[RMDB]
Source: RMDB library OK2TRN, as collected in RNAgym. Structure probing data (DMS) for a 177-nucleotide construct. For DMS the reverse transcriptase was MarathonRT. The reactions ran in a buffer of 150 mM KOAc, 10 mM MgCl2 and 150 mM bicine (pH 8.5), at 24 C. For DMS, 1,107 sequencing reads were counted.

RNA sequence: GGGAACGACUCGAGUAGAGUCGAAAACGGCGGUCUGGUAUGUCCGAUUCGAUUUGCCUGAAUCGUCGAGGUGUCCAGUUCUGGGUCGAGUUCAAGGCGUUGGAGGAGUGGCCGAAACGCGCCUCAAAUUCGACUUUCGUUUCGACGAAAGUCGAAUAAAAGAAACAACAACAACAAC
Reactivity to DMS in 0.01 (KOAc 150mM, MgCl2 10mM, bicine 150mM(pH8.5), 24C), signal-to-noise 1, nucleotides 027 to 126: c060g000g040c040g020g010u000c010u010g000g010u010a030u010g000u000c000c110g000a210u010u000c160g000a080u000u010u000g000c060c020u000g010a080a060u010c000g030u000c010g010a110g010g030u020g000u010c000c030a100g010u000u000c070u010g010g000g010u000c030g010a050g010u000u000c100a130a130g010g000c010g040u010u000g010g010a190g000g000a270g020u010g000g000c010c030g000a040a100a050c140g000c040g000c040c010u000c100a040a070